Chemical mapping of a 207-nucleotide RNA with DMS and 2A3. The data come from the RNA Mapping Database (RMDB), library OK3TST. The RNA was probed in 150 mM KOAc, 10 mM MgCl2 and 150 mM bicine (pH 8.5) at 24 C. 2A3 adducts were read by reverse transcription with SuperScript II with manganese.
RNA sequence: GGGAACGACUCGAGUAGAGUCGAAAAAAGAAUAGCACAGGAAUGACCAGUCUCCAUGAUUCCAUUACCUCCCCCUGGGUCCCUCCCGCAACACGUGGGAAUUCUGGGAGAUAUGAUUCAAAUUGGGUUUUGGGUGGGGACACAGCCAAACCAUAUCCUAAUGAGAUCACUUCGGUGAUCUCAUUAGAAAAGAAACAACAACAACAAC
Reactivity to DMS in 0.01 (KOAc 150mM, MgCl2 10mM, bicine 150mM(pH8.5), 24C), signal-to-noise 2, nucleotides 027 to 156: a080a090g000a160a120u000a030g020c080a100c130a110g000g020a080a100u000g000a090c050c020a060g000u000c030u000c010c010a110u010g080a060u010u020c000c020a180u000u000a100c020c020u000c010c000c010c090c050u000g000g010g000u000c000c000c020u000c080c020c030g000c050a220a110c090a190c220g010u000g030g020g010a040a090u000u020c050u000g000g020g000a000g010a100u020a060u000g000a120u000u000c090a030a090a110u030u010g000g010g030u000u010u030u000g050g000g020u000g000g000g020g000a050c030a040c010a050g040c000c010a010a030a150c010c010a050u000a120u000c020
Reactivity to 2A3 in 0.01 (KOAc 150mM, MgCl2 10mM, bicine 150mM(pH8.5), 24C), signal-to-noise 2, nucleotides 027 to 156: a000a000g110a070a080u080a020g030c000a010c020a020g010g040a080a100u060g080a050c010c020a010g000u010c000u010c070c030a030u040g070a280u060u090c000c050a130u060u190a140c000c040u000c000c000c010c000c010u010g040g000g000u000c010c000c060u010c000c000c000g010c000a010a100c100a070c130g000u000g000g000g080a010a020u150u070c110u110g040g160g000a010g020a000u150a120u130g120a040u010u120c050a000a000a110u120u050g000g010g000u090u040u040u040g000g040g000u040g000g000g000g010a000c000a000c040a030g020c000c000a020a000a010c030c000a030u030a000u100c000